Background: This 177-nucleotide RNA was probed chemically with DMS and 2A3. The RNA was probed in 150 mM KOAc, 10 mM MgCl2 and 150 mM bicine (pH 8.5) at 24 C. For DMS the reverse transcriptase was MarathonRT.

RNA sequence: GGGAACGACUCGAGUAGAGUCGAAAAGAAGGACGCGGCAAGCUGCGAUAAUCCGCGGUUAGGGGCACACACCCUUCGACCCGCGGGUCUCCGAAUGGGCGAACCCGCCAGGAGAUGUCCUGGCAUCGUUACACCUUCAGUUCGCUGAAGGUGUAACAAAAGAAACAACAACAACAAC
Reactivity to DMS in 0.01 (KOAc 150mM, MgCl2 10mM, bicine 150mM(pH8.5), 24C), signal-to-noise 4, nucleotides 027 to 126: g020a090a090g000g000a080c030g020c000g000g000c070a090a110g010c020u000g000c050g000a070u030a070a040u020c010c000g010c000g000g000u000u000a180g000g010g000g020c070a070c300a290c200a160c030c010c020u000u010c070g000a060c300c020c020g020c000g000g020g000u000c070u000c010c030g010a070a050u030g010g000g010c070g010a060a140c020c020c030g000c000c000a030g000g000a060g020a090u010g000u000c000c000u000g000g000c020a050u030c090
Reactivity to 2A3 in 0.01 (KOAc 150mM, MgCl2 10mM, bicine 150mM(pH8.5), 24C), signal-to-noise 7, nucleotides 027 to 126: g090a050a040g040g010a010c000g010c010g000g030c060a030a030g010c020u020g010c010g010a000u060a060a030u030c000c000g000c010g000g000u010u040a020g010g000g010g030c050a030c010a000c010a050c110c020c000u130u230c040g030a050c000c000c000g000c010g010g010g010u010c010u000c010c000g030a060a080u110g030g000g040c040g030a070a060c010c010c010g000c000c000a010g030g000a090g020a120u210g140u120c000c010u000g000g000c000a040u080c050

2A3 is a SHAPE reagent: it acylates the 2'-hydroxyl of flexible nucleotides of all four kinds.